[RMDB]
RNA sequence: GGGAACGACUCGAGUAGAGUCGAAAAGGACUUUGAACAGCCGGCUGGGGUCGAGGUGGAGCGACCAAACAACCUGCCACUGGCGGAUGCACCAGCUCCACUGAAGCCCGCCCGUCAAAAGUUCAAGUACCAGGCUGGGAUUCGUCCCAGCCUGGUAAAAAGAAACAACAACAACAAC
Reactivity to DMS in 0.01 (KOAc 150mM, MgCl2 10mM, bicine 150mM(pH8.5), 24C), signal-to-noise 1, nucleotides 027 to 126: g000g000a000c020u000u030u000g000a060a060c070a190g000c200c010g000g060c000u060g040g000g020g000u000c000g000a300g000g000u000g060g000a000g000c000g030a220c120c020a020a140a290c040a080a040c000c000u080g030c000c000a150c160u010g030g010c200g000g000a150u000g020c300a000c300c100a120g060c000u000c000c020a040c000u000g000a230a230g010c000c000c000g030c300c000c110g000u000c070a040a070a080a120g020u000u000c030a090a010g060
Reactivity to 2A3 in 0.01 (KOAc 150mM, MgCl2 10mM, bicine 150mM(pH8.5), 24C), signal-to-noise 1, nucleotides 027 to 126: g000g000a060c080u110u090u120g070a100a020c000a050g130c120c000g030g100c030u270g100g040g030g220u140c020g130a010g000g010u030g000g000a010g000c000g030a060c050c000a000a060a000c020a050a000c000c000u070g010c000c000a300c220u070g020g020c000g060g000a090u080g000c070a010c040c040a010g010c000u000c000c000a000c010u010g010a000a000g040c000c010c010g010c000c000c000g010u020c050a170a000a000a080g000u000u000c020a010a000g000